An RNA of 177 nucleotides, treated with 2A3 and DMS and read out base by base.
It was measured as part of the RMDB library OK1LIB.
[RMDB]
RNA sequence: GGGAACGACUCGAGUAGAGUCGAAAAACAUAAGGGCAAUCAUUUCACCAUACCCGUGUAACGAAACUAAUACGCAAAUUAGCGAAGGUUUAGAAAUGCUAAUGAAAAACGAGCUAAUUAGCAUACGUCACCAGCAUGAUUUCGAUCAUGCUGGUGAAAAAGAAACAACAACAACAAC
Reactivity to 2A3 in 0.01 (KOAc 150mM, MgCl2 10mM, bicine 150mM(pH8.5), 24C), signal-to-noise 3, nucleotides 027 to 126: a000c030a060u230a090a100g070g000g000c050a020a140u110c020a100u050u100u140c100a140c040c000a030u090a160c000c000c040g000u020g010u070a090a060c060g010a110a040a010c010u040a070a000u300a140c010g000c070a100a130a220u050u050a080g000c000g050a060a040g000g010u000u020u050a050g040a000a170a000u030g000c010u040a020a010u030g070a010a070a080a050a100c120g050a010g030c050u030a050a040u000u010a000g030c000a060u090a090c090g050
Reactivity to DMS in 0.01 (KOAc 150mM, MgCl2 10mM, bicine 150mM(pH8.5), 24C), signal-to-noise 3, nucleotides 027 to 126: a130c200a110u000a090a040g000g040g010c060a050a030u030c110a110u020u020u010c070a060c010c060a070u010a150c050c010c000g010u030g000u000a100a020c150g020a110a100a020c110u010a060a110u010a100c100g020c020a050a040a030u000u010a010g000c000g000a100a140g000g000u000u020u010a030g000a150a070a050u020g000c070u030a010a020u000g000a150a080a040a050a070c070g010a130g000c040u020a100a020u000u000a000g000c010a030u070a050c070g000

The reactions ran in a buffer of 150 mM KOAc, 10 mM MgCl2 and 150 mM bicine (pH 8.5), at 24 C.